[RMDB]
RNA sequence: GGGAACGACUCGAGUAGAGUCGAAAAGCCGAGGCGUCGUAGCACCGCCAACCGUGAGCCCAGCUGCACGAUCGGCAGCCCGAGUCUGGCGGCAAUCUGACGAAACGUCGUCUCGCCUGGCGCCGCACGAGGCGUCCAGUUUCGACUGGACGCCUCGAAAAGAAACAACAACAACAAC
Reactivity to DMS in 0.01 (KOAc 150mM, MgCl2 10mM, bicine 150mM(pH8.5), 24C), signal-to-noise 2, nucleotides 027 to 126: g030c140c010g020a040g030g010c010g040u000c010g040u000a080g000c230a110c040c010g030c010c000a070a030c040c070g000u030g000a100g020c020c030c090a210g000c020u000g040c090a120c150g010a220u010c100g050g030c030a020g010c020c080c010g010a100g010u010c180u020g010g030c000g010g020c110a040a110u060c090u000g010a130c090g000a070a070a030c020g010u000c030g030u000c020u000c040g000c050c060u010g000g010c130g000c000c000g000c130a220
Reactivity to 2A3 in 0.01 (KOAc 150mM, MgCl2 10mM, bicine 150mM(pH8.5), 24C), signal-to-noise 2, nucleotides 027 to 126: g060c050c010g000a030g020g060c010g010u040c000g040u080a030g030c090a040c010c020g000c000c030a000a010c030c020g090u140g060a040g050c040c030c050a050g000c030u050g030c050a080c250g140a300u280c020g020g000c010a010g000c000c010c000g020a060g030u060c180u050g020g010c010g000g040c020a040a070u090c090u120g070a050c030g050a140a100a030c060g110u040c010g030u020c020u000c010g000c000c020u040g030g000c080g000c050c010g080c030a080